Chemical mapping of a 177-nucleotide RNA with 2A3 and DMS. Conditions: 150 mM KOAc, 10 mM MgCl2 and 150 mM bicine (pH 8.5), 24 C. DMS adducts were read by reverse transcription with MarathonRT. Source: RMDB library OK2TST, as collected in RNAgym. For DMS, 3,411 sequencing reads were counted.
RNA sequence: GGGAACGACUCGAGUAGAGUCGAAAAGACGGGCCGGAUCCCGAAUGCGUGCAAGGCCAUAGCGAGCCGGCGCUGGCGCGCGAGCGCCACCUACCGCGGCCCCGCGCCGACCACUCCCGCGGUCGGCUGAAUAGUAUCCGUUCGCGGAUACUAUUCAAAAAGAAACAACAACAACAAC
Reactivity to 2A3 in 0.01 (KOAc 150mM, MgCl2 10mM, bicine 150mM(pH8.5), 24C), signal-to-noise 2, nucleotides 027 to 126: g050a030c030g000g010g000c020c040g020g080a110u080c060c040c010g060a080a090u180g020c030g020u070g070c080a210a180g020g000c020c020a050u140a070g030c040g060a030g010c010c040g010g020c010g010c080u060g020g020c000g000c010g000c020g020a030g020c000g070c000c020a020c020c040u090a110c040c050g070c050g060g050c010c050c000c030g040c030g020c020c000g000a000c000c020a060c120u130c010c000c010g050c040g000g020u010c000g010g010c000
Reactivity to DMS in 0.01 (KOAc 150mM, MgCl2 10mM, bicine 150mM(pH8.5), 24C), signal-to-noise 4, nucleotides 027 to 126: g030a110c110g010g010g000c020c010g010g000a140u010c020c040c010g010a120a040u020g000c020g010u000g010c130a110a090g020g000c050c050a100u000a100g010c150g010a110g020c020c020g000g010c080g010c090u000g000g030c020g020c000g010c300g000a210g020c010g020c000c020a030c070c090u000a090c060c040g020c040g010g000c050c010c000c170g020c120g010c000c000g010a030c000c000a090c070u000c030c040c060g040c120g000g000u000c000g000g020c030